[RMDB]
RNA sequence: GGGAACGACUCGAGUAGAGUCGAAAAUUACUAGUCUGUGAUGAAUUGCUUUGACUUCUGACACCUCGUAUGAAAACUGGACGUGCAGUCUGAUUAUUUAGCAAGACUGAGGCUUAAAAUAAAUCAAAUAUAGAUCCAACUUCGGUUGGAUCUAUAUAAAAGAAACAACAACAACAAC
Reactivity to DMS in 0.01 (KOAc 150mM, MgCl2 10mM, bicine 150mM(pH8.5), 24C), signal-to-noise 1, nucleotides 027 to 126: u020u030a120c070u010a050g030u010c060u000g000u020g010a070u010g000a090a150u000u000g000c020u000u000u000g000a080c040u010u010c000u000g000a120c030a070c000c030u000c030g000u000a100u000g000a080a090a150a070c160u020g010g000a030c050g040u000g010c030a070g000u010c030u000g020a070u010u010a080u000u010u000a020g010c050a040a080g000a140c040u000g000a110g010g050c010u000u010a050a050a070a100u010a020a070a050u010c030a070a040